[RMDB]
RNA sequence: GGGAACGACUCGAGUAGAGUCGAAAAGAUAUGGACUAAUGGAGCUACCAUAAGCGAAGAACACGCAUUUCUCGGAAACGAGAAAUGCGUGGGAGCUUACAUUUAGCGAUGAAAUUAGUCCUAAGUCCCUAGGAGAUAACUUCGGUUAUCUCCUAGGAAAAGAAACAACAACAACAAC
Reactivity to 2A3 in 0.01 (KOAc 150mM, MgCl2 10mM, bicine 150mM(pH8.5), 24C), signal-to-noise 2, nucleotides 027 to 126: g020a010u150a080u210g000g000a010c000u000a020a010u040g020g000a030g030c010u010a070c040c120a170u020a110a000g000c030g300a300a040g090a120a060c010a000c020g010c000a020u010u020u000c000u030c020g030g070a120a070a090c020g000a000g000a050a000a020u060g000c000g000u000g000g000g000a010g040c000u000u020a020c020a170u240u220u100a020g000c090g300a300u060g060a030a020a020u020u000a000g010u030c020c000u020a140a020g110u010c000
Reactivity to DMS in 0.01 (KOAc 150mM, MgCl2 10mM, bicine 150mM(pH8.5), 24C), signal-to-noise 3, nucleotides 027 to 126: g020a110u020a240u000g010g010a020c020u010a010a000u010g000g010a080g040c000u000a010c300c300a190u000a010a020g030c000g010a110a160g000a190a150c010a010c000g010c010a000u000u000u010c010u000c010g010g000a140a070a160c000g000a030g000a020a010a000u000g000c010g020u000g000g000g000a060g020c010u000u000a020c180a300u000u020u000a000g030c010g000a110u030g010a080a130a020u000u000a020g000u000c000c000u000a070a050g000u010c030